[RMDB]
RNA sequence: GGGAACGACUCGAGUAGAGUCGAAAAUAGGGAACUCUACGGUCGCUGUGUGGCGUUAAGCAAUGAGAAUGAUACUUCAGGGAAGCAAUUCUGCAGAGGCAUUUUCACUUCAUGGAUGGCGGUGCCAGAAUACACUAGACGUCGUAGAUUGCGCUGGCCCCGCGACAUAGUUCGCUAUGUCGCGGGGAAAAGAAACAACAACAACAAC
Reactivity to 2A3 in 0.01 (KOAc 150mM, MgCl2 10mM, bicine 150mM(pH8.5), 24C), signal-to-noise 1, nucleotides 027 to 156: u260a030g000g000g020a030a030c040u000c000u030a020c040g000g220u230c020g120c030u010g000u010g020u040g070g000c030g010u060u040a030a020g000c150a090a110u040g000a000g010a020a020u010g010a010u060a190c020u030u130c080a040g050g010g020a070a070g050c060a060a300u070u000c010u010g020c020a000g000a000g060g000c010a010u020u000u020u040c000a000c020u060u030c050a070u070g150g000a100u010g000g020c080g020g090u100g000c010c010a020g000a070a060u150a080c020a000c060u060a030g070a040c040g010u040c000g000u010a000g060a030u070u070g010c110g000c000u020g020g000